[RMDB]
RNA sequence: GGGAACGACUCGAGUAGAGUCGAAAACAACACGUCUUCGGACGUGUUGAAACGUGGUGCGUACGAUAACGCAUAUAAAGCCCAAGACAAGCAGGGCAUAAAAAACAACCAGCUUCGGCUGGUUGAACAGAAUGUCUUUCUUCGGAAAGACAUUCUGAAAAGAAACAACAACAACAAC
Reactivity to 2A3 in 0.01 (KOAc 150mM, MgCl2 10mM, bicine 150mM(pH8.5), 24C), signal-to-noise 2, nucleotides 027 to 126: c000a000a000c010a010c000g000u000c010u060u090c190g080g000a000c000g000u000g000u000u010g020a030a010a000c010g020u050g080g010u010g080c000g000u030a010c010g020a080u020a060a010c010g000c010a000u030a000u010a030a040a010g000c000c000c030a050a010g160a110c090a060a060g090c120a130g050g010g000c040a000u120a010a080a000a000a000a010c000a000a000c010c000a000g000c000u050u090c120g120g000c000u000g010g020u000u010g000a000a000
Reactivity to DMS in 0.01 (KOAc 150mM, MgCl2 10mM, bicine 150mM(pH8.5), 24C), signal-to-noise 2, nucleotides 027 to 126: c010a000a030c000a000c000g000u000c000u010u020c150g030g020a020c000g000u010g000u020u010g000a040a070a280c010g000u000g010g000u000g000c000g000u000a010c000g030a080u010a020a020c020g000c000a020u000a060u000a070a150a150g010c000c000c020a070a110g030a300c180a090a140g030c240a070g010g000g000c010a070u000a000a040a100a090a060a130c010a040a030c000c000a010g000c000u000u010c170g030g030c000u000g000g000u000u000g000a030a150
An RNA of 177 nucleotides, treated with 2A3 and DMS and read out base by base. DMS adducts were read by reverse transcription with MarathonRT. Source: RMDB library M2PK50, as collected in RNAgym. The DMS profile rests on 1,605 reads. Conditions: 150 mM KOAc, 10 mM MgCl2 and 150 mM bicine (pH 8.5), 24 C. Reactivities are given for positions 27 through 126.